[RMDB]
RNA sequence: GGGAACGACUCGAGUAGAGUCGAAAAAGCCGAUGCGAUGAUCGAGAUCUGGAAGAAAUACGGAGUGAUCUGAUGCAGCCACCUAUCGAACCGGUCGACACGCCUACAGGCGAUGUUUCGCCCUACCCGAACGAUCUGCUGAUCCUCGGUGGCAACCCCGAAUGAACUAGUUCGCUAGUUCAUUCGGAAAAGAAACAACAACAACAAC
Reactivity to 2A3 in 0.01 (KOAc 150mM, MgCl2 10mM, bicine 150mM(pH8.5), 24C), signal-to-noise 4, nucleotides 027 to 156: a010g060c030c000g040a040u140g050c040g040a050u030g010a010u050c040g030a010g010a090u020c050u070g060g040a100a070g050a080a160a020u240a090c090g030g010a040g070u100g040a080u010c030u090g050a070u120g040c030a020g020c020c010a020c010c030u040a070u090c030g010a030a050c050c040g000g010u010c010g020a010c000a010c050g010c000c020u210a160c100a110g000g020c010g030a090u050g040u030u110u050c020g010c020c000c010u050a080c010c020c020g020a050a030c060g010a020u010c030u120g070c070u150g070a020u010c000c000u010c030g050g000u010g010g000c010a030a070c020c000
Reactivity to DMS in 0.01 (KOAc 150mM, MgCl2 10mM, bicine 150mM(pH8.5), 24C), signal-to-noise 2, nucleotides 027 to 156: a150g020c040c020g010a060u000g010c030g010a090u000g000a080u010c040g020a200g020a080u000c020u010g000g000a140a120g020a190a040a110u000a140c010g070g020a100g030u010g000a090u020c010u000g040a130u030g000c030a160g000c000c020a040c030c050u000a080u010c050g020a080a050c020c050g000g000u000c070g060a080c070a020c020g020c020c030u000a190c290a130g020g010c010g040a080u000g030u000u000u000c020g000c030c010c030u000a060c090c000c040g030a080a110c120g000a040u000c020u030g010c120u000g000a040u000c010c000u010c030g000g000u000g010g000c040a070a080c090c060
About this RNA
Chemical mapping of a 207-nucleotide RNA with 2A3 and DMS. The data come from the RNA Mapping Database (RMDB), library OK3TST. The 2A3 profile rests on 3,038 reads. The reactions ran in a buffer of 150 mM KOAc, 10 mM MgCl2 and 150 mM bicine (pH 8.5), at 24 C.